This 177-nucleotide RNA was probed chemically with 2A3 and DMS. The RNA was probed in 150 mM KOAc, 10 mM MgCl2 and 150 mM bicine (pH 8.5) at 24 C. For DMS, 29,493 sequencing reads were counted. For DMS the reverse transcriptase was MarathonRT. For 2A3 the reverse transcriptase was SuperScript II with manganese. Reactivities are given for positions 27 through 126.
[RMDB]
RNA sequence: GGGAACGACUCGAGUAGAGUCGAAAACAUGCACGCCGCAGCCACGGGGUUGCGACAUUCUCCUCUGAGGCGAAAGUCUCUCUUACCCGGGGUGCCGAAGGUCAGAUAAGUUGGCGUUGCGGAACCCUCUUGGGUGCGUCUUCGGGCGUACUCAAGAAAAAGAAACAACAACAACAAC
Reactivity to 2A3 in 0.01 (KOAc 150mM, MgCl2 10mM, bicine 150mM(pH8.5), 24C), signal-to-noise 6, nucleotides 027 to 126: c060a030u090g000c010a010c020g010c010c010g010c010a010g030c000c000a080c050g070g000g020g000u060u070g000c000g010a000c000a030u030u010c010u010c000c000u030c040u140g120a090g020g000c020g020a030a010a000g000u000c000u000c000u000c020u060u120a130c000c000c000g010g010g000g000u050g040c010c020g070a080a020g020g030u080c030a000g030a130u130a160a040g050u070u100g030g000c030g000u000u120g000c000g000g010a030a040c000c000c000
Reactivity to DMS in 0.01 (KOAc 150mM, MgCl2 10mM, bicine 150mM(pH8.5), 24C), signal-to-noise 7, nucleotides 027 to 126: c120a080u040g010c040a040c030g000c020c030g020c040a170g020c010c010a110c080g010g000g000g020u010u010g000c090g000a030c040a050u010u000c020u000c000c030u000c120u030g010a070g010g000c050g010a030a050a080g000u010c000u000c000u000c130u010u030a130c010c010c010g000g000g000g010u000g010c030c070g010a080a060g000g000u010c090a100g010a140u020a050a090g010u010u020g000g010c050g000u010u000g010c010g010g000a110a070c030c010c010